[RMDB]
RNA sequence: GGGAACGACUCGAGUAGAGUCGAAAAAACCGAAGGACCUCAUCAUUCGGAUCUUCCGAGGCAUUUCUCCUGUCGAUUACGGCGCUAAAUCCUCUUUUAGCUAACGCCUCGACUAUUUCACCAACAGGACGAUGACUAGCUUCGGCUAGUCAUCGUCAAAAGAAACAACAACAACAAC
Reactivity to 2A3 in 0.01 (KOAc 150mM, MgCl2 10mM, bicine 150mM(pH8.5), 24C), signal-to-noise 2, nucleotides 027 to 126: a000a000c000c010g020a040a010g080g030a040c040c040u090c040a100u030c000a070u100u100c000g020g050a090u040c050u160u000c010c040g000a010g000g000c010a060u080u010u050c010u000c000c030u000g010u010c000g000a050u130u100a180c030g000g020c000g020c020u000a060a100a080u110c000c040u130c010u020u010u030u020a000g030c030u070a130a050c030g030c000c000u010c000g010a010c020u040a060u040u030u130c120a140c120c000a230a080c050a060g020